Annotation: The record gives the reactivity of an RNA of 177 nucleotides to 2A3 and DMS. The RNA was probed in 150 mM KOAc, 10 mM MgCl2 and 150 mM bicine (pH 8.5) at 24 C. For DMS the reverse transcriptase was MarathonRT. Source: RMDB library OK2TRN, as collected in RNAgym.
RNA sequence: GGGAACGACUCGAGUAGAGUCGAAAACAAAUUAUACCCAGUCUAAGUCAAAGGUUAAAGCACGGCAAGUCGAUCUGGACACUCUAAUCGACAUGUUUCUCCCUUUUAAGAGUGGCCAGGUGGGAAACCGAUAGAAUGUUUUCGAACAUUCUAUCGGAAAAGAAACAACAACAACAAC
Reactivity to 2A3 in 0.01 (KOAc 150mM, MgCl2 10mM, bicine 150mM(pH8.5), 24C), signal-to-noise 2, nucleotides 027 to 126: c010a010a070a000u240u180a090u130a130c000c000c000a010g010u080c030u110a090a010g020u040c070a150a040a080g070g000u060u150a100a020a010g050c030a030c090g000g000c040a070a070g060u040c000g030a030u000c000u040g000g000a000c000a000c020u030c010u040a030a090u040c050g090a060c050a090u110g040u050u140u000c050u050c040c000c000u000u060u060u120a130a050g000a000g010u010g000g020c000c000a010g000g000u070g000g030g000a050a040a030
Reactivity to DMS in 0.01 (KOAc 150mM, MgCl2 10mM, bicine 150mM(pH8.5), 24C), signal-to-noise 3, nucleotides 027 to 126: c110a080a090a090u030u010a130u010a180c020c010c010a120g000u000c060u010a050a140g000u000c050a060a090a080g000g010u000u000a030a070a080g010c060a050c080g010g010c080a070a100g000u020c050g010a050u000c010u000g000g000a040c020a000c010u000c010u000a080a080u010c090g010a060c180a050u010g000u000u020u010c070u010c030c050c020u000u000u020u000a090a080g000a030g020u000g000g000c020c000a020g020g010u000g000g000g000a080a110a160